Annotation: An RNA of 177 nucleotides, treated with 2A3 and read out base by base.
RNA sequence: GGGAACGACUCGAGUAGAGUCGAAAAUUAGCGCGAACCAUCAAUGAACAGCUGGCUAUAAUCAACCGCCAUGGACCGGCUAUGUUGGAGAAUACAUUUCGUGGAGUGAAGCCACACUUCUCAUAUGCUGAGUGUCUCCGUUCGCGGAGACACUCAGAAAAGAAACAACAACAACAAC
Reactivity to 2A3 in 0.01 (KOAc 150mM, MgCl2 10mM, bicine 150mM(pH8.5), 24C), signal-to-noise 1, nucleotides 027 to 126: u050u060a060g000c030g010c000g040a010a000c000c030a050u010c050a110a190u080g100a100a000c060a040g080c000u050g060g000c000u040a050u040a110a030u100c040a000a100c100c000g010c000c000a010u070g000g050a100c000c000g000g080c000u060a010u030g180u110u110g120g060a040g230a080a140u280a000c110a300u090u070u200c050g000u030g000g030a020g000u000g140a120a000g040c020c000a000c000a000c000u040u000c000u000c000a120u050a120u170g000

Source information:
Values cover nucleotides 27 to 126.